[RMDB]
RNA sequence: GGGAACGACUCGAGUAGAGUCGAAAACUGAGCUGGGAGAAAGCAUUCUCUGCGAUGGCUCGAUCCUUUUGGGACCGGAUCCUCAGCCCCCAGCCCCCCGGGACUCAUCAGGAUCGGGCCUUUCGCAGGAUAAAUCGAUCUUCGGAUCGAUUUAUCCAAAAGAAACAACAACAACAAC
Reactivity to 2A3 in 0.01 (KOAc 150mM, MgCl2 10mM, bicine 150mM(pH8.5), 24C), signal-to-noise 5, nucleotides 027 to 126: c050u070g030a010g030c020u040g020g050g000a090g070a070a110a000g060c040a100u100u000c050u000c010u030g000c000g010a010u020g000g000c000u000c000g000a000u010c000c000u000u020u010u000g010g000g010a010c010c000g020g010a050u090c000c040u090c070a060g020c000c000c000c010c000a010g010c020c010c010c010c000c000g010g000g070a190c000u000c000a010u010c020a000g000g010a000u000c000g000g010g000c010c000u010u030u000c000g000c000a000
Reactivity to DMS in 0.01 (KOAc 150mM, MgCl2 10mM, bicine 150mM(pH8.5), 24C), signal-to-noise 4, nucleotides 027 to 126: c060u000g020a060g010c060u000g010g000g010a100g010a110a090a080g030c080a200u010u000c010u010c010u000g000c000g020a030u000g000g000c000u000c000g000a010u000c000c010u000u020u010u000g020g000g000a300c000c000g020g000a100u030c070c060u020c100a110g000c040c000c020c030c010a080g000c020c020c040c090c020c010g000g000g000a170c000u000c010a000u000c060a010g000g000a000u000c010g010g000g010c000c010u000u000u020c000g010c010a060